[RMDB]
RNA sequence: GGGAACGACUCGAGUAGAGUCGAAAAUCUUGUCACUGAAAUAAAAGAUGGCAUUAUGUGGUUAAGAGCAUGGGGCGAGGGGUCAGACAUGAGUCUAAGGUUCUGCCCUUACUCCAGUGUGUGACCCGCCCGCAUGACACUUCGGUGUCAUGCGGGCAAAAGAAACAACAACAACAAC
Reactivity to 2A3 in 0.01 (KOAc 150mM, MgCl2 10mM, bicine 150mM(pH8.5), 24C), signal-to-noise 1, nucleotides 027 to 126: u000c020u020u000g000u000c000a070c000u120g050a000a120a300u200a010a120a000a050g110a120u040g000g050c010a030u000u030a000u190g130u190g010g010u060u100a030a000g010a000g140c000a000u300g040g000g000g040c000g040a040g000g010g000g010u060c000a000g130a000c000a000u120g030a000g000u020c120u260a010a140g110g000u220u000c090u270g000c000c000c000u000u050a010c070u050c000c090a100g040u000g030u000g030u030g030a000c060c000c010